[RMDB]
RNA sequence: GGGAACGACUCGAGUAGAGUCGAAAAGAGGUAAUCUCAAAUUGUAACAGUGGGUUGAUUUUCCUGGUGAAUCCCGGCCUUGUCCUCCGUCACAAGUGUGACAAGUGUCUCGAAAACGUGUUCGCUAGAGCUGGUCUAAGUUCGCUUAGACCAGCUCAAAAGAAACAACAACAACAAC
Reactivity to 2A3 in 0.01 (KOAc 150mM, MgCl2 10mM, bicine 150mM(pH8.5), 24C), signal-to-noise 1, nucleotides 027 to 126: g000a000g040g020u240a070a120u010c000u000c040a010a080a060u080u030g070u070a240a010c060a080g010u110g000g060g060u080u040g040a100u040u000u100u000c030c030u010g110g080u050g150a000a080u010c000c000c060g000g000c000c030u000u000g000u020c000c000u030c010c000g000u020c000a020c000a100a040g030u010g080u080g200a000c010a000a020g050u040g090u040c190u070c060g200a190a190a000a000c070g020u040g000u030u000c020g000c000u000a000

Chemical mapping of a 177-nucleotide RNA with 2A3. The reactions ran in a buffer of 150 mM KOAc, 10 mM MgCl2 and 150 mM bicine (pH 8.5), at 24 C. Values cover nucleotides 27 to 126.